[RMDB]
RNA sequence: GGGAACGACUCGAGUAGAGUCGAAAACGUUUGACCGACGCGGGGGUGCGUCUCCUGCGGCCGAAGAUCUCGUUUUCGUGGAAGACGGCGCGUUUCGCCUCUGGGAGUACGAAACCGGUGGAGAGAGAUAGAGUAGCUUAUUCGUAAGCUACUCUAUAAAAGAAACAACAACAACAAC
Reactivity to 2A3 in 0.01 (KOAc 150mM, MgCl2 10mM, bicine 150mM(pH8.5), 24C), signal-to-noise 6, nucleotides 027 to 126: c000g020u000u050u200g090a100c010c010g000a010c000g000c010g030g020g010g000g030u140g090c110g110u040c010u020c000c000u010g000c000g000g020c070c010g030a060a030g020a100u010c050u020c100g020u010u010u030u040c080g030u110g100g090a060a030g050a040c040g010g030c030g000c030g040u010u030u050c010g000c000c000u010c010u030g060g030g010a040g020u080a100c040g030a120a070a040c010c020g030g030u060g050g020a060g000a010g000a000g000
Reactivity to DMS in 0.01 (KOAc 150mM, MgCl2 10mM, bicine 150mM(pH8.5), 24C), signal-to-noise 9, nucleotides 027 to 126: c020g010u000u010u000g000a240c180c020g000a090c030g010c020g010g010g010g000g010u010g020c190g010u010c000u010c000c000u000g010c050g010g000c150c040g010a060a070g000a120u000c040u000c040g010u000u000u000u000c010g020u000g010g010a090a070g010a080c060g010g010c080g010c140g000u000u000u000c020g000c100c010u000c030u000g000g010g000a070g010u000a070c070g010a040a100a120c030c030g010g010u000g000g000a100g000a090g010a100g000